[RMDB]
RNA sequence: GGGAACGACUCGAGUAGAGUCGAAAACGUGAACAUCGCUCUGCUAAGUCCCGUCGUUCUUCCAGUCAGAGCGAGAUUGUAAGCAACCUUAUGCGCAAUGAAGACAUAGAGGGACUUCUGCAAGAAGACUACCUCGCUGGUUCGCCAGCGAGGUAGUAAAAGAAACAACAACAACAAC
Reactivity to 2A3 in 0.01 (KOAc 150mM, MgCl2 10mM, bicine 150mM(pH8.5), 24C), signal-to-noise 2, nucleotides 027 to 126: c100g020u080g110a070a010c000a090u040c000g000c030u010c000u080g010c030u030a000a100g000u090c000c000c000g080u020c070g040u000u020c010u140u020c000c000a160g110u290c020a000g010a000g010c000g000a000g000a000u000u030g030u020a140a080g030c060a000a220c010c010u080u080a090u090g030c000g000c050a050a180u080g050a080a000g010a000c030a030u230a000g080a020g000g000g000a000c050u030u010c000u020g000c020a040a190g080a070a000g030
Reactivity to DMS in 0.01 (KOAc 150mM, MgCl2 10mM, bicine 150mM(pH8.5), 24C), signal-to-noise 1, nucleotides 027 to 126: c190g000u010g050a150a110c110a090u000c010g000c050u000c000u040g000c170u080a020a000g000u000c030c100c010g000u000c080g030u000u000c040u000u000c010c210a000g020u000c070a010g020a080g000c050g000a070g000a040u000u060g000u000a070a170g050c050a040a170c060c060u040u000a010u000g050c000g000c080a000a070u000g000a220a170g000a000c000a130u000a040g000a030g000g040g000a000c000u010u000c090u000g020c060a090a280g000a040a070g000